The record gives the reactivity of an RNA of 155 nucleotides to 2A3.
The reactions ran in a buffer of 150 mM KOAc, 10 mM MgCl2 and 150 mM bicine (pH 8.5), at 24 C.
For 2A3 the reverse transcriptase was SuperScript II with manganese.
RNA sequence: GGGAACGACUCGAGUAGAGUCGAAAAAUGGUGCUGUGUGCUGCAGCGACGACCCGCGUUCUUUUAGCCAAUACUUAAAGCCAGAUGGUGCCGAAAAAUAAAGAAUUUGGCAGCCAACAAGGAGUUCGCUCCUUGAAAAGAAACAACAACAACAAC
Reactivity to 2A3 in 0.01 (KOAc 150mM, MgCl2 10mM, bicine 150mM(pH8.5), 24C), signal-to-noise 2, nucleotides 027 to 135: a050u300g230g090u300g090c080u060g060u050g050u130g190c110u090g000c060a050g020c020g030a030c040g040a030c010c000c010g020c030g050u080u060c090u080u070u040u110a030g040c070c080a190a100u170a290c140u240u300a300a120a000g120c060c040a130g040a300u200g130g000u080g010c040c000g140a070a070a050a030a030u300a100a250a020g160a090a080u050u010u020g000g000c030a050g080c030c000a020a020c010a010a030g000g010a010g010u030u020c140g050c050u000c020c070u000u020g020a060